[RMDB]
RNA sequence: GGGAACGACUCGAGUAGAGUCGAAAAGAUAUGGACCGACGGCUGGCUUGGAUUUAUGGUCGGAAACGACCAUUGUCAGCCACCGUUCGGUCCUAAGUCAAAGGCUUGAAUCUUCGGAUUCAAGCCAGCUAACUCAUGUCUUCGGACAUGAGUUAGCAAAAGAAACAACAACAACAAC
Reactivity to DMS in 0.01 (KOAc 150mM, MgCl2 10mM, bicine 150mM(pH8.5), 24C), signal-to-noise 1, nucleotides 027 to 126: g000a080u010a300u010g010g000a000c000c000g000a020c000g000g020c300u000g010g010c030u000u000g060g020a030u010u010u010a030u000g000g030u000c000g000g000a070a100a240c000g030a000c000c000a010u020u020g000u000c010a040g000c000c000a020c020c000g030u000u000c000g020g000u000c000c010u010a010a060g030u020c030a180a200a110g000g000c000u000u000g000a000a010u000c000u000u030c130g040g010a050u000u000c010a020a000g020c000c000a000
Reactivity to 2A3 in 0.01 (KOAc 150mM, MgCl2 10mM, bicine 150mM(pH8.5), 24C), signal-to-noise 2, nucleotides 027 to 126: g030a050u110a040u170g000g010a000c000c020g000a010c000g050g030c300u090g000g020c010u050u290g120g000a060u300u300u290a000u040g030g030u020c010g000g090a120a050a050c030g010a010c030c010a000u000u050g000u000c010a000g020c000c000a000c020c000g000u060u000c010g000g000u000c000c000u000a000a000g000u010c020a020a130a090g020g000c000u000u000g010a010a000u000c010u070u150c300g220g000a020u010u000c000a010a020g000c010c000a000

Overview:
Chemical mapping of a 177-nucleotide RNA with DMS and 2A3. For DMS the reverse transcriptase was MarathonRT. The DMS profile rests on 1,220 reads. It was measured as part of the RMDB library TTRDES. Values are in units of 0.01, from 0 to 300, in steps of 10.